[RMDB]
RNA sequence: GGGAACGACUCGAGUAGAGUCGAAAAACCUUUGUGUCUCCGAAGGUGGGUCCAUUGAGCCAUGGAGAAGAUCCCAUUGGGAUCGUAACAUGGCAAUGAUGUGGACUGUUACAGCGGAGACACUCUGGUAAAAGAUGGUGUGUUCGCACACCAUCAAGUGCACAGUAGUCUUCGGACUACUGUGCACAAAAGAAACAACAACAACAAC
Reactivity to 2A3 in 0.01 (KOAc 150mM, MgCl2 10mM, bicine 150mM(pH8.5), 24C), signal-to-noise 1, nucleotides 027 to 156: a000c000c000u000u000u000g010u000g040u000c000u000c020c010g020a060a040g080g080u210g100g000g000u000c000c010a010u020u030g050a010g000c000c000a000u000g010g000a010g010a000a010g010a010u000c000c010c070a160u190u300g000g000g000a000u000c000g000u000a000a000c000a000u000g010g060c000a000a050u050g020a020u020g030u000g030g000a000c010u070g160u140u090a070c030a070g020c000g020g000a020g000a000c000a000c000u000c000u010g000g040u040a020a050a000a110g010a000u000g000g000u010g000u010g020u040u080c230g060c150a040c010a000c010c000a000u000c000a000a000
Annotation: Structure probing data (2A3) for a 207-nucleotide construct. 2A3 adducts were read by reverse transcription with SuperScript II with manganese.